[RMDB]
RNA sequence: GGGAACGACUCGAGUAGAGUCGAAAAGAAUCACCAAAACAAGUGGUUUUGGUUUGUGAAUCACCAAAACAAGUGGUUUUGGUUUGUGAAUCAGUAUGGUUUACCCAAAACACUUGUUUGGUGUGUUAACCCGUGAUAAGUUCGCUUAUCACGGGUUAAAAGAAACAACAACAACAAC
Reactivity to DMS in 0.01 (KOAc 150mM, MgCl2 10mM, bicine 150mM(pH8.5), 24C), signal-to-noise 2, nucleotides 027 to 126: g000a130a100u020c100a060c010c010a010a010a000a010c030a280a170g060u030g010g010u000u000u000u000g010g030u000u000u000g030u000g000a100a080u000c000a000c010c000a010a050a030a000c010a050a010g010u000g000g010u000u000u000u000g020g000u030u030u000g030u000g000a000a000u010c010a190g000u020a070u020g010g000u000u000u000a030c020c010c000a000a000a010a000c000a030c000u000u000g000u000u000u000g010g000u010g010u000g000u030u000
Reactivity to 2A3 in 0.01 (KOAc 150mM, MgCl2 10mM, bicine 150mM(pH8.5), 24C), signal-to-noise 4, nucleotides 027 to 126: g070a000a060u200c080a010c020c000a020a000a000a020c060a120a110g180u100g180g040u200u020u000u020g040g000u040u050u120g020u010g020a020a040u040c000a000c000c000a000a030a030a050c000a000a010g050u040g170g050u080u000u000u010g070g000u110u180u300g000u000g010a000a020u010c030a050g290u230a260u300g000g000u000u010u000a000c000c000c000a000a030a000a000c000a000c000u000u010g020u030u000u000g010g000u000g000u000g000u000u000
This 177-nucleotide RNA was probed chemically with DMS and 2A3.
DMS (dimethyl sulfate) methylates the pairing face of unpaired adenines and cytosines.
The reactions ran in a buffer of 150 mM KOAc, 10 mM MgCl2 and 150 mM bicine (pH 8.5), at 24 C.
For 2A3 the reverse transcriptase was SuperScript II with manganese.
It was measured as part of the RMDB libraries RFM100 and RFMREP.
2A3 is a SHAPE reagent: it acylates the 2'-hydroxyl of flexible nucleotides of all four kinds.